[RMDB]
RNA sequence: GGGAACGACUCGAGUAGAGUCGAAAAGACAAUCAGUUCGCUGAUUGUCAAAAGAGCAGCUAUGAGCUCAAGUGUCAUAGCAUAAGAUCGAAAGAUCAAAAAAAAGCAGAUACUUCGGUAUCUGCAAGAUAAUACCGUCCUUCGGGACGGUAUUAUCAAAAGAAACAACAACAACAAC
Reactivity to 2A3 in 0.01 (KOAc 150mM, MgCl2 10mM, bicine 150mM(pH8.5), 24C), signal-to-noise 1, nucleotides 027 to 126: g010a000c000a000a000u000c000a000g050u050u090c140g040c130u010g000a000u000u010g000u000c000a000a000a040a010g000a010g000c000a010g000c000u000a000u000g000a000g000c020u060c240a150a100g210u170g000u130c000a000u000a010g000c020a010u070a070a080g020a000u000c000g000a020a080a020g020a020u030c000a000a000a000a000a020a030a000a070g000c010a000g010a000u010a010c020u070u130c210g110g000u000a000u010c000u000g000c010a000a000
Reactivity to DMS in 0.01 (KOAc 150mM, MgCl2 10mM, bicine 150mM(pH8.5), 24C), signal-to-noise 1, nucleotides 027 to 126: g020a000c000a000a000u000c000a030g030u000u040c270g010c000u000g010a010u000u000g010u000c000a040a030a130a120g010a010g020c030a190g010c000u000a000u000g000a030g010c000u000c000a120a090g070u020g010u000c000a000u000a010g000c000a150u000a130a130g000a010u000c000g030a190a120a080g000a000u000c010a000a000a000a010a080a050a110a130g000c010a000g000a010u000a000c010u000u050c140g050g010u000a000u010c000u000g010c000a000a030
About this RNA: An RNA of 177 nucleotides, treated with 2A3 and DMS and read out base by base. Conditions: 150 mM KOAc, 10 mM MgCl2 and 150 mM bicine (pH 8.5), 24 C.